[RMDB]
RNA sequence: GGGAACGACUCGAGUAGAGUCGAAAAGAUAUGGACUGGAUCGACAUGCCGAUCGGAAACGAUCGAGCAACAGCGAUACCCAGUCCUAAGUCAAAUCUAAGACACACCUUCGGGUGUGUCUUAGAAACUUUUCAAAUAGGUUCGCCUAUUUGAAAAGAAAAGAAACAACAACAACAAC
Reactivity to 2A3 in 0.01 (KOAc 150mM, MgCl2 10mM, bicine 150mM(pH8.5), 24C), signal-to-noise 1, nucleotides 027 to 126: g000a010u030a010u070g000g010a000c010u000g030g000a000u010c020g150a160c140a150u020g000c010c000g010a010u000c010g020g000a030a020a010c010g010a000u000c000g040a060g050c010a000a010c040a100g100c010g000a010u080a190c000c000c020a010g000u010c000c010u010a030a010g020u000c010a020a020a250u060c000u010a000a010g010a010c000a000c010a000c010c020u060u170c300g020g000g020u000g000u000g000u000c000u000u000a000g000a000a000a000
Reactivity to DMS in 0.01 (KOAc 150mM, MgCl2 10mM, bicine 150mM(pH8.5), 24C), signal-to-noise 4, nucleotides 027 to 126: g010a030u010a240u010g000g010a030c000u010g000g010a040u000c000g020a100c130a190u000g000c010c000g000a000u000c010g010g010a040a050a090c000g020a010u000c000g020a130g010c010a010a100c300a100g000c010g000a020u000a130c280c020c000a010g010u000c000c000u000a000a090g000u000c000a110a090a120u000c000u000a000a000g000a000c000a000c000a010c000c000u000u020c210g010g030g020u000g030u000g000u000c000u010u000a000g000a040a080a090